[RMDB]
RNA sequence: GGGAACGACUCGAGUAGAGUCGAAAAGAUAUGGAGAUCACACGACGAUAAGGAUGCGAACCGCACAUCGUCGGAAACGACGAUGUGCGGGAGGUAUAUCCUUUUGACGUCGGUGAUCUCCUAAGUCCUACACAUAUUCCUUCGGGAAUAUGUGUAGAAAAGAAACAACAACAACAAC
Reactivity to DMS in 0.01 (KOAc 150mM, MgCl2 10mM, bicine 150mM(pH8.5), 24C), signal-to-noise 3, nucleotides 027 to 126: g000a110u010a300u010g010g000a030g010a010u000c000a010c010a210c010g020a020c000g010a200u000a020a030g010g010a030u010g000c090g010a090a300c000c000g000c010a010c020a010u000c000g010u000c000g010g010a030a090a270c000g010a020c000g010a030u010g020u000g020c020g000g010g010a000g020g010u010a070u020a120u000c000c000u000u000u000u000g010a140c040g000u000c010g000g020u010g000a000u000c000u000c000c000u010a010a060g000u000c040
Reactivity to 2A3 in 0.01 (KOAc 150mM, MgCl2 10mM, bicine 150mM(pH8.5), 24C), signal-to-noise 2, nucleotides 027 to 126: g070a020u130a090u300g000g010a000g000a000u000c010a010c040a040c120g000a000c010g030a040u020a120a010g030g020a010u060g090c080g080a130a050c000c000g030c000a000c010a030u000c010g020u010c010g000g000a030a010a000c030g000a000c000g000a000u010g030u000g040c030g000g010g000a000g000g010u140a110u010a020u210c000c000u010u020u040u120g300a090c010g000u000c000g010g010u000g000a000u000c000u000c010c010u010a010a000g010u000c000

The data come from the RNA Mapping Database (RMDB), library TTRINS.
An RNA of 177 nucleotides, treated with DMS and 2A3 and read out base by base.
For DMS, 4,727 sequencing reads were counted.
The 2A3 profile rests on 8,026 reads.